[RMDB]
RNA sequence: GGGAACGACUCGAGUAGAGUCGAAAAAUCCUCAGGUUCAUAAGCGUGGUGAUUGGGUGUUCAUGCUCCAUGCAUGACAUGUGCCUCCUUUGAACCUUGUUACGACCUUGGCACAUUACCCAUCUGAAAAAGACGUUCGCGUUCGCGCGAACGUCAACGUAUCUACUAUCUUCGGAUAGUAGAUACGAAAAGAAACAACAACAACAAC
Reactivity to 2A3 in 0.01 (KOAc 150mM, MgCl2 10mM, bicine 150mM(pH8.5), 24C), signal-to-noise 6, nucleotides 027 to 156: a000u030c000c000u020c030a010g030g000u000u000c010a020u040a260a050g040c090g100u090g040g060u110g120a120u090u190g060g030g010u040g040u110u070c000a000u000g000c010u050c180c080a130u300g000c000a000u000g000a000c020a010u060g040u050g010c000c000u020c000c000u010u000u020g010a010a000c000c000u000u060g020u020u110a070c080g050a090c010c070u050u080g000g010c010a010c000a060u060u150a040c000c000c000a020u000c040u060g080a100a060a040a070a050g010a000c000g000u000u000c000g000c000g030u030u060c200g000c000g000c000g080a000a000c000g000u000c000a000a000
Reactivity to DMS in 0.01 (KOAc 150mM, MgCl2 10mM, bicine 150mM(pH8.5), 24C), signal-to-noise 2, nucleotides 027 to 156: a100u000c010c010u030c060a050g010g000u000u000c030a060u000a040a070g030c140g000u000g010g020u010g010a130u000u000g020g010g040u010g020u000u000c010a030u010g020c000u000c190c300a170u000g030c000a020u000g000a040c190a100u000g000u000g020c000c000u010c090c020u000u000u000g030a050a000c000c020u000u000g010u000u000a150c090g000a110c100c040u000u000g000g000c010a040c030a100u000u010a110c010c000c010a120u000c070u000g000a070a070a110a150a180g010a020c000g070u000u010c000g070c000g050u000u010c290g000c000g020c020g000a010a010c000g000u000c000a000a020